[RMDB]
RNA sequence: GGGAACGACUCGAGUAGAGUCGAAAAAAGAUAUGGAUUGCUGAUGACCCACAUGUAAGGACGAUAAGCUUCUCGGAAACGAGAAGCUUUUGACGUCUUGAGUGUGGCAAGGCAAUCCUAAGUCAAACGAUAUUUACUCGUUCGCGAGUAAAUAUCGAAAAGAAACAACAACAACAAC
Reactivity to DMS in 0.01 (KOAc 150mM, MgCl2 10mM, bicine 150mM(pH8.5), 24C), signal-to-noise 4, nucleotides 027 to 126: a110a100g000a050u010a300u000g000g010a010u000u000g010c010u000g000a110u010g000a090c300c000c000a020c000a000u000g000u020a300a050g010g010a010c000g010a110u010a030a010g010c000u000u000c000u000c010g020g000a120a120a180c000g010a000g000a000a000g010c000u000u000u000u000g010a190c080g010u000c000u000u010g000a300g010u010g010u000g000g000c000a030a060g020g000c000a000a010u000c000c000u010a020a070g010u000c030a060a070a220
Reactivity to 2A3 in 0.01 (KOAc 150mM, MgCl2 10mM, bicine 150mM(pH8.5), 24C), signal-to-noise 2, nucleotides 027 to 126: a020a010g090a040u140a060u090g000g010a000u000u010g020c010u000g020a300u140g060a160c030c040c010a020c000a010u080g130u300a030a000g030g010a000c000g010a050u010a070a000g010c030u040u000c010u000c000g030g030a100a070a030c000g000a000g000a000a000g000c000u000u000u000u000g000a000c000g030u020c000u030u020g050a060g020u000g010u000g010g000c000a100a150g000g010c000a000a010u020c000c000u000a100a050g020u000c060a120a030a080